[RMDB]
The data come from the RNA Mapping Database (RMDB), library TTRINS. Structure probing data (DMS) for a 177-nucleotide construct. For DMS, 2,398 sequencing reads were counted.

RNA sequence: GGGAACGACUCGAGUAGAGUCGAAAAGAUAUGGACCAUACCUCUCUUAGUGCCCACGGGAGCGUAGUAUCGGAAACGAUACGAAACGCAUCGAUCGUGGCACUAAGAGAGGUAUGGUCCUAAGUCACCCUAUUAAAACCUUCGGGUUUUAAUAGGGAAAAGAAACAACAACAACAAC
Reactivity to DMS in 0.01 (KOAc 150mM, MgCl2 10mM, bicine 150mM(pH8.5), 24C), signal-to-noise 2, nucleotides 027 to 126: g010a030u000a300u010g000g020a010c000c000a030u000a000c010c000u000c000u000c000u000u000a010g000u000g020c150c010c020a030c030g010g010g010a050g000c010g000u000a250g000u000a000u000c000g010g010a160a080a300c000g010a000u000a010c000g010a060a120a070c000g020c010a250u000c140g000a100u000c020g020u010g010g000c000a020c010u000a000a000g000a030g010a000g000g030u010a010u000g000g010u000c000c000u010a000a080g010u000c020a240

Values cover nucleotides 27 to 126.